The data come from the RNA Mapping Database (RMDB), library M2RFPK. An RNA of 207 nucleotides, treated with 2A3 and DMS and read out base by base. DMS (dimethyl sulfate) methylates the pairing face of unpaired adenines and cytosines.

RNA sequence: GGGAACGACUCGAGUAGAGUCGAAAAACUGACGGUACGCCGUCAGAACGGUAGUAAAGAUGGUUUGAAAACCACGCCUUCUACCAAUAUAGUAAAUAAAUAGGCGGAGCGGUCAUACGUGACCGCAAAAACAUAUUCAGCUUCGGCUGAAUAUGAAGAACGAUAAAUUGUUCGCAAUUUAUCGUUCAAAAGAAACAACAACAACAAC
Reactivity to 2A3 in 0.01 (KOAc 150mM, MgCl2 10mM, bicine 150mM(pH8.5), 24C), signal-to-noise 6, nucleotides 027 to 156: a010c000u000g000a010c000g000g000u050a040c210g060c040c010g000u000c000a000g000a020a000c030g000g000u000a010g010u000a010a000a020g060a300u030g010g050u040u100u150g180a140a120a000a000c000c000a000c000g000c000c000u000u000c000u000a000c000c000a020a000u190a020u050a030g090u060a000a060a130u080a050a090a040u130a040g010g000c000g000g020a000g010c000g000g000u000c000a020u050a130c230g090u040g000a000c000c000g000c000a000a000a000a000a000c000a000u000a000u000u000c000a000g000c000u030u090c140g120g000c000u000g000a000a000u000a000u000g000a010a010
Reactivity to DMS in 0.01 (KOAc 150mM, MgCl2 10mM, bicine 150mM(pH8.5), 24C), signal-to-noise 2, nucleotides 027 to 156: a110c020u000g010a040c000g000g020u010a040c300g040c020c010g000u010c000a000g020a020a080c160g010g030u000a000g010u000a030a010a000g000a190u000g000g010u000u000u000g000a100a080a110a030c000c000a040c040g010c000c000u000u000c000u000a010c000c020a140a150u000a140u000a170g010u000a080a130a100u040a070a040a110u010a030g000g000c020g030g000a140g000c000g000g020u000c000a110u000a080c190g050u000g010a090c010c000g000c000a000a000a040a130a060c000a010u000a000u000u000c000a000g010c000u010u000c300g080g060c000u000g000a000a000u000a000u010g020a070a080

For 2A3 the reverse transcriptase was SuperScript II with manganese. The 2A3 profile rests on 5,874 reads. Conditions: 150 mM KOAc, 10 mM MgCl2 and 150 mM bicine (pH 8.5), 24 C.